[RMDB]
Structure probing data (DMS and 2A3) for a 177-nucleotide construct. 2A3 adducts were read by reverse transcription with SuperScript II with manganese. DMS adducts were read by reverse transcription with MarathonRT. The 2A3 profile rests on 1,161 reads.
RNA sequence: GGGAACGACUCGAGUAGAGUCGAAAAGCUGACACCUUACAGGAAACUCCUGUUGUGCCUGAUACUGUUGAAGUCCCACCGCAAGUGGUGAAACUUCCGUCUGCACCUCAGACUAUCCAGCCCGAGGGUGCUAUUGUUUGUUCGCAAACAAUAGCACAAAAGAAACAACAACAACAAC
Reactivity to DMS in 0.01 (KOAc 150mM, MgCl2 10mM, bicine 150mM(pH8.5), 24C), signal-to-noise 1, nucleotides 027 to 126: g000c040u000g000a070c100a110c050c180u010u020a090c110a130g010g000a060a090a170c160u000c050c010u020g000u000u000g000u000g000c010c070u000g010a090u010a030c190u000g000u030u000g010a020a070g010u010c070c010c000a010c050c020g000c300a160a110g010u010g010g050u020g000a090a040a090c030u000u000c010c050g000u010c030u000g030c070a140c030c020u010c020a080g010a040c030u000a110u000c060c000a080g040c020c000c040g000a050g010g010
Reactivity to 2A3 in 0.01 (KOAc 150mM, MgCl2 10mM, bicine 150mM(pH8.5), 24C), signal-to-noise 1, nucleotides 027 to 126: g030c030u020g030a050c020a040c070c000u060u120a010c040a010g030g050a080a090a090c030u020c020c000u020g000u000u040g030u080g030c000c000u040g000a040u070a110c080u150g080u120u120g010a000a000g040u040c040c000c000a000c000c010g080c080a100a020g030u050g080g000u110g050a100a030a010c000u020u000c010c000g020u000c020u010g010c020a030c010c000u060c000a010g000a020c020u010a020u000c030c000a020g000c050c010c000g010a020g030g110